[RMDB]
RNA sequence: GGGAACGACUCGAGUAGAGUCGAAAAGGCAGUUGGAUCAGUUGAGUCGUUUAGGAUCUAGUUCACUUACAAAUAUACCUGAGGAAGUUCGUGAACAUGUAAAGCUACUGUUAAAUGUAACUCCGACUGUAAGACCAGAUGCAGAUCAAAUGACAAAUAUUAGUCAGUAGUUCGCUACUGACUAAUAAAAAGAAACAACAACAACAAC
Reactivity to DMS in 0.01 (KOAc 150mM, MgCl2 10mM, bicine 150mM(pH8.5), 24C), signal-to-noise 4, nucleotides 027 to 156: g010g020c050a070g020u000u000g000g020a130u000c080a110g000u000u000g000a100g030u000c020g020u000u000u000a150g020g000a050u000c040u000a120g020u000u000c020a120c040u010u000a110c030a030a150a150u000a170u000a130c080c060u020g000a150g030g020a120a190g000u000u000c070g010u010g020a040a090c030a040u010g010u010a040a080a090g010c070u000a030c070u000g000u000u000a050a100a120u000g010u010a010a060c040u000c020c000g010a050c060u000g000u000a050a100g010a120c030c030a070g020a110u000g000c080a060g010a070u000c020a050a070a050u000g000a070c060a060a080a160
Reactivity to 2A3 in 0.01 (KOAc 150mM, MgCl2 10mM, bicine 150mM(pH8.5), 24C), signal-to-noise 5, nucleotides 027 to 156: g130g040c070a040g010u020u030g020g010a070u080c060a080g030u050u060g040a010g020u020c010g010u030u010u060a090g010g040a020u040c020u060a050g020u040u030c020a020c020u010u040a010c020a030a120a020u200a060u070a200c020c110u110g020a090g060g040a120a060g040u030u040c020g000u020g010a010a010c010a030u110g040u110a080a150a060g060c050u040a020c010u030g020u080u110a070a180a080u090g040u060a020a030c010u000c010c010g030a040c030u020g000u030a050a020g020a070c040c030a000g010a080u090g040c040a010g040a080u050c030a070a030a030u080g030a030c020a040a030a030
Structure probing data (DMS and 2A3) for a 207-nucleotide construct.
Source: RMDB library OK3TST, as collected in RNAgym.
For 2A3, 2,848 sequencing reads were counted.